[RMDB]
This 177-nucleotide RNA was probed chemically with DMS and 2A3. The DMS profile rests on 823 reads.

RNA sequence: GGGAACGACUCGAGUAGAGUCGAAAAUUAAUUUCUGCACUUGUAUCAGGCUCGGGACGGUUCUAUGCACAAUAUGUCUUCGACAGUUGCCAAACCAGUAUUUUCCACGAGGAAGAGUAUGGCGAGGCAGGGGCCUGGAAUUCGUUCCAGGCCCCUGAAAAGAAACAACAACAACAAC
Reactivity to DMS in 0.01 (KOAc 150mM, MgCl2 10mM, bicine 150mM(pH8.5), 24C), signal-to-noise 1, nucleotides 027 to 126: u010u030a080a220u010u000u000c000u010g090c110a000c040u000u000g060u010a000u000c140a120g010g000c020u000c000g000g000g000a060c070g000g000u000u000c000u000a070u000g030c160a060c020a030a010u000a090u010g000u010c000u000u000c210g000a030c100a000g000u030u060g040c090c000a090a300a130c010c000a090g010u090a120u000u000u000u000c000c000a160c120g000a070g070g000a000a000g160a080g080u060a040u030g100g010c000g000a280g000g000
Reactivity to 2A3 in 0.01 (KOAc 150mM, MgCl2 10mM, bicine 150mM(pH8.5), 24C), signal-to-noise 1, nucleotides 027 to 126: u020u000a010a220u180u000u000c040u020g040c020a070c060u030u100g020u080a090u190c000a060g100g100c080u000c000g050g050g070a000c020g020g000u070u000c060u080a070u180g040c030a030c020a000a080u120a070u300g080u000c000u140u140c180g050a060c050a140g000u000u030g000c000c000a030a060a000c000c000a000g030u000a110u000u000u000u000c030c000a070c140g120a180g090g000a000a010g050a000g000u300a030u070g010g000c010g000a030g000g000
Description:
It was measured as part of the RMDB library OK1LIB. The RNA was probed in 150 mM KOAc, 10 mM MgCl2 and 150 mM bicine (pH 8.5) at 24 C. Reactivities are given for positions 27 through 126.